An RNA of 177 nucleotides, treated with DMS and read out base by base.
The data come from the RNA Mapping Database (RMDB), library OK2TST.
Values cover nucleotides 27 to 126.
DMS adducts were read by reverse transcription with MarathonRT.
RNA sequence: GGGAACGACUCGAGUAGAGUCGAAAAAUAUUUCAUCAACAUGGUUUUGAGCUUGUUACCGAUUACAUUCAUUGAUUACACUAGCAGAAAGCUAAUUACCUUGUUGGGUGGCUUUCCCAUUAGUGGGCACAUCACCCCGAUUCGUCGGGGUGAUGUGAAAAGAAACAACAACAACAAC
Reactivity to DMS in 0.01 (KOAc 150mM, MgCl2 10mM, bicine 150mM(pH8.5), 24C), signal-to-noise 2, nucleotides 027 to 126: a120u020a030u000u010u000c020a020u010c000a000a010c020a010u010g000g000u000u000u000u000g010a030g020c020u020u010g000u000u000a080c100c070g000a090u000u000a110c230a070u000u010c170a130u000u000g000a110u000u000a100c140a070c170u000a040g000c110a070g000a160a020a030g000c010u000a040a020u000u000a010c000c000u010u000g030u000u010g020g010g020u000g000g000c300u000u000u000c020c020c010a190u000u050a080g020u010g020g000g000
Conditions: 150 mM KOAc, 10 mM MgCl2 and 150 mM bicine (pH 8.5), 24 C.